[RMDB]
RNA sequence: GGGAACGACUCGAGUAGAGUCGAAAAGAUAUGGACUUGACACGCCUAAGACAGACACUCGGAAACGAGUGUUCGAGGACCCGUGCAAUGAGUCCUAAGUCAAAACUCAGCACUUCGGUGCUGAGAACGUUCAAAGCUUGUUCGCAAGCUUUGAACGAAAAGAAACAACAACAACAAC
Reactivity to 2A3 in 0.01 (KOAc 150mM, MgCl2 10mM, bicine 150mM(pH8.5), 24C), signal-to-noise 1, nucleotides 027 to 126: g040a010u020a000u050g020g000a020c000u110u110g010a150c010a040c040g050c040c080u150a240a070g050a080c000a000g020a000c000a000c000u000c040g010g000a020a000a020c020g010a020g000u000g000u030u000c040g000a040g000g000a070c130c070c050g000u010g010c010a100a280u300g030a200g000u000c000c010u010a000a000g020u000c000a010a000a030a270c000u000c010a000g010c000a020c010u050u090c300g160g020u010g000c020u000g000a000g000a000a010
Reactivity to DMS in 0.01 (KOAc 150mM, MgCl2 10mM, bicine 150mM(pH8.5), 24C), signal-to-noise 2, nucleotides 027 to 126: g010a030u000a090u010g000g000a030c020u000u020g020a210c000a040c030g020c090c060u020a220a100g040a110c300a190g000a020c020a000c000u000c010g020g040a030a010a030c000g010a000g000u000g030u000u000c020g000a070g020g010a140c190c190c070g000u000g000c050a150a110u010g020a020g010u010c000c000u010a010a060g020u000c050a050a030a030a160c010u000c010a000g000c000a000c000u010u000c190g020g000u000g000c000u010g050a000g020a030a070